[RMDB]
RNA sequence: GGGAACGACUCGAGUAGAGUCGAAAACCAUAGGAUUUCGAUCCUAUGGCCUGCUAUGUCGGGUAAUAGCUUUUCGACUCUACUUGGGUCGUUCCCACGCGAUGGGGACCGGUUUCGACCGGUCCAACAUACAGACAAAGUUCGCUUUGUCUGUAUGAAAAGAAACAACAACAACAAC
Reactivity to DMS in 0.01 (KOAc 150mM, MgCl2 10mM, bicine 150mM(pH8.5), 24C), signal-to-noise 4, nucleotides 027 to 126: c010c000a010u000a000g010g000a010u000u000u010c180g010a030u000c000c000u000a000u000g000g000c160c110u000g000c000u010a040u000g000u010c150g020g000g020u010a110a040u000a030g000c050u000u000u000u000c000g000a020c000u000c000u000a000c000u000u000g000g000g000u000c000g010u000u000c000c000c000a010c060g010c150g010a100u010g010g010g010g010a010c000c000g010g000u000u000u010c180g000a020c000c000g000g010u000c000c000a010a040

This 177-nucleotide RNA was probed chemically with DMS. It was measured as part of the RMDB library M2PK50. The reactions ran in a buffer of 150 mM KOAc, 10 mM MgCl2 and 150 mM bicine (pH 8.5), at 24 C.